[RMDB]
RNA sequence: GGGAACGACUCGAGUAGAGUCGAAAAGAUAUGGAACGAGGGAGGAACUACCCUUCAUCCUUCGGAAACGAAGGGAGGGCCGAAGAACUCGUUCCUAAGUCAAAAUCAGGUAGUUCGCUACCUGAAACCGUACUGAUGAGUUCGCUCAUCAGUACGGAAAAGAAACAACAACAACAAC
Reactivity to 2A3 in 0.01 (KOAc 150mM, MgCl2 10mM, bicine 150mM(pH8.5), 24C), signal-to-noise 2, nucleotides 027 to 126: g040a030u030a030u080g040g000a000a040c000g000a030g040g000g020a060g030g020a070a030c060u300a300c130c020c000u080u030c070a220u140c010c000u100u080c110g020g020a030a100a000c060g020a020a000g030g000g020a020g010g000g000c080c030g150a240a000g040a030a030c010u000c000g000u000u000c000c010u010a010a010g030u000c020a000a020a010a300u070c030a020g000g020u000a000g030u040u130c300g000c140u000a000c000c000u000g000a020a010a010